RNA sequence: GGGAACGACUCGAGUAGAGUCGAAAAGAUAUGGACUGGUAGCACUAUAAUCUUCGCUCCCCACCUCGGAAACGAGAGGCGAAGGUAGUGCGAACAGUCCUAAGUCAAACACUGGUUCGCCAGUGAACAUUGAUCAAUUGUUCGCAAUUGAUCAAUGAAAAGAAACAACAACAACAAC
Reactivity to DMS in 0.01 (KOAc 150mM, MgCl2 10mM, bicine 150mM(pH8.5), 24C), signal-to-noise 9, nucleotides 027 to 126: g010a040u000a300u010g000g000a020c010u000g000g000u010a270g010c000a010c000u000a100u000a290a110u010c010u000u000c000g020c010u000c050c020c010c030a300c100c010u000c000g000g000a090a070a160c010g000a010g010a140g020g000c010g000a010a010g010g000u000a000g020u000g010c000g000a050a300c010a000g000u000c000c000u000a010a050g000u000c030a120a140a220c010a000c000u000g000g010u000u010c250g020c000c000a010g010u000g000a070a180
Reactivity to 2A3 in 0.01 (KOAc 150mM, MgCl2 10mM, bicine 150mM(pH8.5), 24C), signal-to-noise 7, nucleotides 027 to 126: g030a010u070a060u140g010g000a000c010u010g010g090u140a010g010c010a000c010u020a040u050a300a190u090c000u020u000c010g000c010u080c010c000c000c010a200c020c000u010c010g000g020a060a060a040c010g000a000g010a010g030g010c010g000a000a000g010g000u000a000g000u010g010c000g010a050a000c000a000g000u000c000c000u000a010a010g000u000c020a030a060a050c000a000c010u010g000g090u070u080c300g060c090c000a000g000u000g020a040a010